[RMDB]
RNA sequence: GGGAACGACUCGAGUAGAGUCGAAAAGACGGAAAAGAUCGAACCUAAGAAGAUUAGGAAGUGUGAGCCGAAUCCUAGGGCUCCUAGGGACGCAUCGUCCGAUGCGAAAUAAACACUAACGUCGAAAACCAGCGUCACUAUUCGUAGUGACGCUGGUAAAAGAAACAACAACAACAAC
Reactivity to 2A3 in 0.01 (KOAc 150mM, MgCl2 10mM, bicine 150mM(pH8.5), 24C), signal-to-noise 2, nucleotides 027 to 126: g000a000c000g010g080a040a040a140a000g090a020u090c160g090a040a000c000c000u020a020a000g120a050a050g050a140u000u010a010g060g010a040a260g000u000g000u000g090a050g020c060c080g060a060a000u030c000c000u040a130g010g050g010c010u020c000c010u060a020g000g000g000a000c000g000c010a000u000c020g300u040c030c190g030a020u000g020c000g090a080a020a020u080a000a110a000c030a040c030u080a140a000c000g050u000c000g000a000a000a000
Reactivity to DMS in 0.01 (KOAc 150mM, MgCl2 10mM, bicine 150mM(pH8.5), 24C), signal-to-noise 1, nucleotides 027 to 126: g020a000c020g000g000a000a070a080a130g060a170u020c270g000a100a090c000c030u000a000a080g000a170a100g000a060u020u000a000g000g000a120a050g020u000g020u060g000a020g030c000c000g000a200a040u030c000c040u000a060g020g000g000c160u000c000c100u000a000g050g000g030a300c000g000c000a000u050c060g000u000c240c200g000a000u000g010c000g000a030a060a100u000a060a190a000c030a070c090u000a030a130c030g000u000c030g000a100a090a120